Source information
Structure probing data (2A3 and DMS) for a 177-nucleotide construct. Conditions: 150 mM KOAc, 10 mM MgCl2 and 150 mM bicine (pH 8.5), 24 C. For DMS the reverse transcriptase was MarathonRT.

RNA sequence: GGGAACGACUCGAGUAGAGUCGAAAAAUGGAUGGGACAUUGGUAUUUACAGUACUAAUGCAAAUACUGUAUUUUUCUAUAUAGUGCGCAAUAUGUAGGAAUUUGCAGUUAGAUUAGACAGUAUGGGAGACGGACUAAUUUUCGAAUUAGUCCGUCUAAAAGAAACAACAACAACAAC
Reactivity to 2A3 in 0.01 (KOAc 150mM, MgCl2 10mM, bicine 150mM(pH8.5), 24C), signal-to-noise 4, nucleotides 027 to 126: a010u140g070g010a060u020g060g030g020a010c020a020u040u000g030g040u050a110u100u170u090a120c110a040g020u010a040c000u010a030a020u030g100c090a050a070a040u140a020c000u010g010u030a000u000u010u000u000u000c000u010a020u000a010u000a010g140u180g100c090g010c120a110a080u010a010u050g000u000a020g000g020a040a030u010u000u000g000c010a000g000u010u060a000g020a010u070u010a040g020a030c030a050g090u070a050u080g040g040g060
Reactivity to DMS in 0.01 (KOAc 150mM, MgCl2 10mM, bicine 150mM(pH8.5), 24C), signal-to-noise 3, nucleotides 027 to 126: a100u010g000g000a100u020g000g000g000a160c020a020u000u000g020g020u000a010u000u000u040a080c240a160g010u000a020c000u000a000a020u000g010c100a080a060a090u030a020c000u000g000u010a000u000u000u000u000u000c000u000a010u010a000u000a020g020u010g010c090g020c070a060a090u010a010u000g020u000a010g000g010a000a010u000u000u000g000c000a010g000u000u000a040g000a110u010u000a080g000a090c080a070g030u020a050u000g010g020g020